[RMDB]
RNA sequence: GGGAACGACUCGAGUAGAGUCGAAAACAUGUGCUGGAGUUGCGCCGAGAGGCGUUGCGACCAAGAGUCAUUGGUGAUAUUGACAAUCGCUUGCGCCCCCGAUCGAGCAAACUCUCGCGUAACCGACCGUGUGAUUCUAGUUCGCUAGAAUCACACGAAAAGAAACAACAACAACAAC
Reactivity to DMS in 0.01 (KOAc 150mM, MgCl2 10mM, bicine 150mM(pH8.5), 24C), signal-to-noise 3, nucleotides 027 to 126: c160a150u000g010u000g010c020u000g000g020a120g010u000u000g000c000g010c060c010g000a090g000a100g000g000c070g020u010u000g000c010g010a040c110c120a080a080g020a140g000u000c030a070u000u010g020g030u020g000a070u010a080u010u010g010a070c060a140a130u000c040g020c010u000u000g020c030g000c000c010c030c020c060g000a120u000c060g020a240g030c040a060a060a060c030u000c000u000c290g000c020g010u020a060a100c050c020g000a100c140
Reactivity to 2A3 in 0.01 (KOAc 150mM, MgCl2 10mM, bicine 150mM(pH8.5), 24C), signal-to-noise 3, nucleotides 027 to 126: c030a050u150g060u060g150c030u070g000g020a090g020u010u020g050c040g030c170c060g050a030g010a010g040g000c000g020u030u020g000c010g010a020c030c040a100a030g100a050g130u020c030a050u110u190g220g080u170g180a120u110a050u200u080g010a020c030a030a050u040c000g010c070u190u300g000c000g000c000c010c000c030c030g020a070u070c040g010a020g050c020a000a020a080c000u030c010u000c010g000c000g000u020a050a020c000c020g020a020c020

The record gives the reactivity of an RNA of 177 nucleotides to DMS and 2A3. Source: RMDB library OK2TST, as collected in RNAgym. For DMS, 2,085 sequencing reads were counted. Conditions: 150 mM KOAc, 10 mM MgCl2 and 150 mM bicine (pH 8.5), 24 C. DMS adducts were read by reverse transcription with MarathonRT.